[RMDB]
RNA sequence: GGGAACGACUCGAGUAGAGUCGAAAAGGGGGACCCACUUGUUGCAACGCUCGUUGCUAGGGGUGAAUCCGAAAGGACGGGCAUCUCUCCAAGCCCGAACCCGACAGCUAACCUCGCAAGCGCUUUGCUACAGGAGAUACUUCGGUAUCUCCUGUAGAAAAGAAACAACAACAACAAC
Reactivity to DMS in 0.01 (KOAc 150mM, MgCl2 10mM, bicine 150mM(pH8.5), 24C), signal-to-noise 1, nucleotides 027 to 126: g020g000g020g000g020a220c010c010c010a190c090u000u010g020u010u000g010c040a040a030c050g030c150u000c240g010u010u000g040c020u060a110g000g010g020g000u000g010a150a080u000c000c000g070a040a140a140g000g020a150c050g000g000g020c000a130u000c010u000c060u000c120c090a130a130g000c010c000c000g000a050a060c000c000c000g000a300c160a030g000c020u000a140a120c020c030u000c040g000c150a040a040g000c230g000c080u000u000u000g030